About this RNA: This 207-nucleotide RNA was probed chemically with 2A3 and DMS. For DMS the reverse transcriptase was MarathonRT. The 2A3 profile rests on 1,518 reads. Reactivities are given for positions 27 through 156. For 2A3 the reverse transcriptase was SuperScript II with manganese. The RNA was probed in 150 mM KOAc, 10 mM MgCl2 and 150 mM bicine (pH 8.5) at 24 C. Source: RMDB library OK3TST, as collected in RNAgym.
RNA sequence: GGGAACGACUCGAGUAGAGUCGAAAAGUUGCACUUGGCUCACACUACCAGCCCAGACCCCACAACUGACAAACAUGAGCCAGGGACAGAGCAGUGAGUGGUAUGUGAGUGACAAGCUUGGGGUCCAGCCACUGUGCACAGCCAGGCACACUGGCUGCAGCUCUCCGUAAUUCGUUACGGAGAGCUGAAAAGAAACAACAACAACAAC
Reactivity to 2A3 in 0.01 (KOAc 150mM, MgCl2 10mM, bicine 150mM(pH8.5), 24C), signal-to-noise 2, nucleotides 027 to 156: g050u050u100g020c060a020c110u160u140g020g010c000u000c000a020c000a020c040u090a050c010c020a020g020c030c000c000a020g010a070c000c000c030c020a020c020a040a130c040u170g040a040c070a120a190a000c070a190u140g040a030g070c050c070a050g050g010g000a050c080a030g040a030g020c030a040g010u050g100a020g020u020g060g010u070a080u040g020u000g020a030g000u110g060a060c040a090a030g040c060u070u080g000g000g000g010u020c040c000a020g030c000c000a010c040u070g000u020g000c010a030c010a120g020c000c000a040g030g020c090a040c000a010c200u020g000g010c000u020g010
Reactivity to DMS in 0.01 (KOAc 150mM, MgCl2 10mM, bicine 150mM(pH8.5), 24C), signal-to-noise 1, nucleotides 027 to 156: g000u020u010g030c000a100c040u000u000g030g040c000u060c090a010c090a090c100u010a090c080c010a070g030c120c100c030a270g000a090c010c000c000c060a160c070a140a090c000u010g030a090c060a030a130a190c110a040u000g060a130g010c050c020a080g000g000g020a140c060a140g000a090g020c000a170g060u010g010a110g020u020g040g020u000a010u000g020u020g000a110g030u000g060a040c050a100a100g030c090u000u000g000g040g020g030u030c040c030a060g000c000c020a000c000u000g030u030g080c010a060c010a080g060c000c020a120g000g040c150a010c030a100c010u000g010g000c000u010g020